An RNA of 177 nucleotides, treated with DMS and read out base by base. Conditions: 150 mM KOAc, 10 mM MgCl2 and 150 mM bicine (pH 8.5), 24 C. DMS adducts were read by reverse transcription with MarathonRT.
RNA sequence: GGGAACGACUCGAGUAGAGUCGAAAAGAUAUGGACAACGUAGGGAGAAGCACAGUACUGAUAUAGAUAUCGGAAACGAUAUCUAUAUCAGUACUGUGGCUUCGACGAUCUACAGUUGUCCUAAGUCCAUAAGUUAAGGCUUCGGCCUUAACUUAUGAAAAGAAACAACAACAACAAC
Reactivity to DMS in 0.01 (KOAc 150mM, MgCl2 10mM, bicine 150mM(pH8.5), 24C), signal-to-noise 3, nucleotides 027 to 126: g010a090u010a300u000g010g000a020c010a010a000c000g010u000a010g000g010g000a030g010a020a010g010c010a020c000a010g020u000a010c000u010g000a020u000a000u000a010g000a020u000a010u000c000g010g000a150a100a180c000g020a010u000a000u000c000u000a000u000a000u000c000a010g010u000a000c000u010g020u000g010g010c010u000u000c000g000a060c280g010a020u020c000u000a000c000a140g040u000u000g000u000c000c000u000a000a070g000u000c030
Source: RMDB library TTRINS, as collected in RNAgym.